[RMDB]
RNA sequence: GGGAACGACUCGAGUAGAGUCGAAAACACCCGAAGAAAGGAAGGGUGAAAACCCUGUUUCGGCGGGAAUUACUCCUGUCGGCCGCUGGGCACUCCCCACCGUCCUUUUUUGCCAGUUCGCUCCAGGGUUAGUGACUAUGUUCGCAUAGUCACUAACAAAAGAAACAACAACAACAAC
Reactivity to DMS in 0.01 (KOAc 150mM, MgCl2 10mM, bicine 150mM(pH8.5), 24C), signal-to-noise 1, nucleotides 027 to 126: c190a130c000c000c010g020a070a070g000a030a030a030g010g020a050a030g000g000g000u010g000a070a080a080a050c010c000c000u000g010u000u000u000c010g000g000c010g010g000g010a030a090u000u010a060c150u010c000c020u010g000u010c010g000g010c050c090g000c050u000g020g000g020c060a070c080u000c040c010c020c000a040c050c020g000u000c000c000u000u000u000u000u010u010g000c040c020a050g010u010u000c040g020c040u000c010c020a040g000g010